[RMDB]
RNA sequence: GGGAACGACUCGAGUAGAGUCGAAAACUCUUGCACAGAAUCACCUUUCUAUAAUAACCAGUGCAAGAAGGGUUAUUAUACCAUUUAAUGUGCCGAGGCCACGCGGAGUUCGAUCGAGGGUACAGCAAAAACGUGAAGUACUUCGGUACUUCACGAAUCUAUGAGAACACUUCGGUGUUCUCAUAGAAAAAGAAACAACAACAACAAC
Reactivity to DMS in 0.01 (KOAc 150mM, MgCl2 10mM, bicine 150mM(pH8.5), 24C), signal-to-noise 2, nucleotides 027 to 156: c020u000c020u000u000g030c010a030c030a130g010a160a080u000c080a120c040c050u010u000u000c040u000a030u000a040a040u000a010a030c000c010a300g000u010g010c020a060a070g000a110a180g020g030g020u000u000a020u000u000a030u000a080c220c100a120u010u010u010a090a080u020g030u000g000c000c030g000a160g020g000c000c020a080c020g020c010g010g020a190g000u020u000c070g000a080u010c000g000a100g020g000g040u000a020c020a040g010c060a070a040a050a090a160c000g010u000g000a010a020g010u000a040c000u000u010c290g050g030u000a010c000u000u000c020a010c010g010a010a030
Reactivity to 2A3 in 0.01 (KOAc 150mM, MgCl2 10mM, bicine 150mM(pH8.5), 24C), signal-to-noise 2, nucleotides 027 to 156: c000u000c000u000u000g000c010a010c010a010g060a100a110u160c050a120c040c020u130u300u180c120u080a020u000a030a010u010a000a000c000c010a000g000u000g000c000a000a000g010a000a010g020g000g000u010u000a000u010u000a010u010a050c030c020a130u130u210u270a220a140u240g060u100g040c000c000g000a010g010g010c020c000a000c020g040c020g060g050a150g070u150u160c030g050a260u040c020g010a160g000g020g000u010a010c010a010g010c000a040a030a000a000a000c010g000u000g000a000a000g000u010a000c000u010u060c150g030g000u000a000c000u000u000c030a000c000g000a000a000